[RMDB]
RNA sequence: GGGAACGACUCGAGUAGAGUCGAAAAUGCGAUGCGCCCCAGGACAGCCGCAUCUUCCUUGUCAGCGUGGAAGGUAACAGUGUACCCCUCACACCCUGUGGGCUGUGGCACCCCAAGGACCAUCUGCGUUACCCAAAAGGUUCGCCUUUUGGGUAACAAAAGAAACAACAACAACAAC
Reactivity to DMS in 0.01 (KOAc 150mM, MgCl2 10mM, bicine 150mM(pH8.5), 24C), signal-to-noise 3, nucleotides 027 to 126: u000g010c020g010a060u010g020c100g010c050c030c000c050a110g020g010a100c080a070g010c080c050g010c060a020u010c030u010u000c010c020u000u010g010u010c070a080g030c070g040u000g000g010a040a040g030g010u000a100a080c110a100g000u010g000u000a180c060c000c000c020u000c050a060c120a100c060c040c030u000g010u000g030g000g010c030u010g040u000g020g010c050a100c040c010c010c030a070a110g010g010a100c060c050a080u010c040u000g010c290
Reactivity to 2A3 in 0.01 (KOAc 150mM, MgCl2 10mM, bicine 150mM(pH8.5), 24C), signal-to-noise 2, nucleotides 027 to 126: u070g000c050g070a030u010g030c080g040c020c020c060c020a030g010g020a030c050a080g050c010c000g050c030a020u000c000u020u000c030c000u110u150g160u180c100a040g080c110g080u070g000g060a070a020g050g010u070a050a030c050a100g030u040g040u300a180c000c000c000c000u000c000a070c000a020c010c020c000u020g020u290g030g030g030c010u040g000u030g030g000c000a000c010c000c000c010a000a030g050g000a010c020c020a050u020c010u020g000c030